[RMDB]
RNA sequence: GGGAACGACUCGAGUAGAGUCGAAAAAAAAAGAUAUGGAACCACGAACUACGUAGAACAGCCUAUGAAGCUAUGUCGGAAACGACAUAGUGGAGGCUGUUACUACGCGUGGUUCCUAAGUCAAAAACAGAGAAAUAAGGUUCGCCUUAUUUCUCUGAAAAGAAACAACAACAACAAC
Reactivity to 2A3 in 0.01 (KOAc 150mM, MgCl2 10mM, bicine 150mM(pH8.5), 24C), signal-to-noise 3, nucleotides 027 to 126: a020a030a000a000a000g030a020u040a010u060g000g000a000a000c010c020a000c010g020a050a040c130u240a040c300g000u000a000g010a010a000c000a000g000c020c000u300a300u300g000a010a000g020c010u000a000u000g010u000c000g000g000a010a010a020c010g000a000c000a000u010a000g010u000g010g000a000g000g050c010u000g000u000u000a000c000u000a000c010g020c000g000u000g000g010u000u000c000c000u000a000a000g000u000c010a000a070a000a090a110
Reactivity to DMS in 0.01 (KOAc 150mM, MgCl2 10mM, bicine 150mM(pH8.5), 24C), signal-to-noise 3, nucleotides 027 to 126: a060a040a070a080a100g000a010u000a100u000g000g010a010a010c000c000a010c010g000a090a010c090u020a300c010g010u000a010g010a040a010c000a000g010c000c010u010a300u030g000a120a180g000c000u000a000u000g000u000c010g010g000a030a020a030c000g010a020c000a010u000a010g000u000g000g000a010g030g010c000u000g010u000u000a020c000u000a000c000g020c000g030u000g000g010u000u000c000c000u000a000a050g000u010c010a070a060a070a080a110
Chemical mapping of a 177-nucleotide RNA with 2A3 and DMS. For 2A3, 6,213 sequencing reads were counted. The reactions ran in a buffer of 150 mM KOAc, 10 mM MgCl2 and 150 mM bicine (pH 8.5), at 24 C.